[RMDB]
RNA sequence: GGGAACGACUCGAGUAGAGUCGAAAAGAUAUGGACGUUGUAGACAUGAAGAUGGGUCGGAAACGACCCUACCUUCAACAGCUACGGACGUCCUAAGUCAAAAGGCAUCGCGUUCGCGCGAUGCCAACGAUCAUCUUGGGUUCGCCCAAGAUGAUCGAAAAGAAACAACAACAACAAC
Reactivity to 2A3 in 0.01 (KOAc 150mM, MgCl2 10mM, bicine 150mM(pH8.5), 24C), signal-to-noise 1, nucleotides 027 to 126: g010a000u030a000u060g020g010a000c010g030u030u060g020u020a030g060a080c180a300u300g010a070a000g030a030u020g000g010g010u030c000g000g010a030a000a000c010g000a010c000c000c010u000a030c010c000u040u050c030a060a030c100a090g050c000u000a000c020g080g020a000c010g000u000c000c000u010a000a000g020u000c020a000a000a000a220g030g000c000a010u000c000g010c000g230u080u120c300g000c000g000c010g260a010u020g020c010c000a000a020
Reactivity to DMS in 0.01 (KOAc 150mM, MgCl2 10mM, bicine 150mM(pH8.5), 24C), signal-to-noise 2, nucleotides 027 to 126: g010a020u000a070u000g000g000a010c000g020u000u020g000u010a000g000a050c020a300u000g000a000a000g000a120u010g000g000g010u000c000g010g000a010a030a050c000g000a010c000c000c000u010a000c160c000u000u000c000a100a060c290a100g000c000u000a010c000g010g030a000c000g010u000c000c000u000a000a090g000u000c000a110a090a280a160g000g020c000a000u000c000g020c000g030u010u000c270g020c040g030c000g010a000u000g010c010c000a000a000